Structure probing data (2A3 and DMS) for a 177-nucleotide construct. The reactions ran in a buffer of 150 mM KOAc, 10 mM MgCl2 and 150 mM bicine (pH 8.5), at 24 C. It was measured as part of the RMDB library RFMREP. For DMS, 1,358 sequencing reads were counted. For 2A3 the reverse transcriptase was SuperScript II with manganese. Reactivities are given for positions 27 through 126.
RNA sequence: GGGAACGACUCGAGUAGAGUCGAAAAGUAUAGUAACAAUGUUGAAUAUGACUCUUAAUUGAGGAAAUGGGUGAUCCGCAGCCAAAUCCUAAGGACAUUUUAUUGUCUAUGGAUGCAGUUCACAGGCGUAAUGCGAUUAGUUCGCUAAUCGCAUUACAAAAGAAACAACAACAACAAC
Reactivity to 2A3 in 0.01 (KOAc 150mM, MgCl2 10mM, bicine 150mM(pH8.5), 24C), signal-to-noise 2, nucleotides 027 to 126: g030u040a100u080a200g100u090a140a050c060a170a170u170g010u130u090g100a180a060u200a060u070g060a020c000u020c010u010u120a200a160u300u030g010a020g030g090a060a040a090u060g050g000g010u000g040a050u000c020c000g020c030a010g050c030c000a000a040a040u090c030c010u060a070a110g000g000a000c000a000u130u300u210u150a130u270u060g010u020c030u000a000u030g000g030a000u030g000c020a020g000u020u030c040a010c030a030g230g000c020
Reactivity to DMS in 0.01 (KOAc 150mM, MgCl2 10mM, bicine 150mM(pH8.5), 24C), signal-to-noise 2, nucleotides 027 to 126: g010u000a100u010a080g030u000a050a040c110a090a120u010g010u000u010g000a050a080u010a070u000g030a210c020u010c010u000u000a040a120u020u000g000a040g000g030a100a100a050u000g000g000g010u000g000a050u000c030c030g000c020a140g010c020c030a050a120a090u010c020c020u000a080a140g010g010a020c020a030u000u000u020u000a050u020u010g010u000c000u020a300u010g000g000a020u000g020c060a040g020u000u000c010a040c070a120g000g000c280